[RMDB]
RNA sequence: GGGAACGACUCGAGUAGAGUCGAAAAUGGUGAGGAAGAUAACAGCUAUGAAUAGAGGAGAAUUUAAACAGAUAACCUUAGCAACAGGUGCAGGAAAGACCACUGAGCUCCCUAGGUCAGUCAUAGAACCGUUGGUCUGAUUCGUCAGACCAACGGUAAAAGAAACAACAACAACAAC
Reactivity to DMS in 0.01 (KOAc 150mM, MgCl2 10mM, bicine 150mM(pH8.5), 24C), signal-to-noise 1, nucleotides 027 to 126: u000g000g000u050g020a070g000g000a050a000g040a080u000a000a110c140a080g030c080u000a020u000g000a110a040u020a060g000a100g000g000a020g090a120a100u050u040u000a010a180a050c080a000g020a170u020a050a080c020c000u000u090a110g000c130a020a110c200a000g000g000u000g050c000a010g060g030a140a000a020g010a100c040c100a100c000u040g000a000g000c020u000c050c010c000u010a100g000g000u030c040a110g000u000c060a080u020a010g020a180
Reactivity to 2A3 in 0.01 (KOAc 150mM, MgCl2 10mM, bicine 150mM(pH8.5), 24C), signal-to-noise 1, nucleotides 027 to 126: u080g010g000u040g000a000g000g100a010a020g020a160u150a170a000c000a080g010c000u020a060u110g120a190a140u080a160g030a040g010g000a000g000a030a010u000u000u230a280a300a050c160a000g020a040u020a110a080c040c020u020u060a030g020c010a000a020c000a090g010g000u000g090c000a010g070g000a280a000a000g000a000c000c000a030c020u000g000a000g030c030u020c000c000c000u160a120g020g000u000c100a080g080u120c020a060u000a030g110a080
This 177-nucleotide RNA was probed chemically with DMS and 2A3. Source: RMDB library OK1LIB, as collected in RNAgym. 2A3 adducts were read by reverse transcription with SuperScript II with manganese. The DMS profile rests on 1,176 reads. 2A3 is a SHAPE reagent: it acylates the 2'-hydroxyl of flexible nucleotides of all four kinds. For DMS the reverse transcriptase was MarathonRT. The reactions ran in a buffer of 150 mM KOAc, 10 mM MgCl2 and 150 mM bicine (pH 8.5), at 24 C.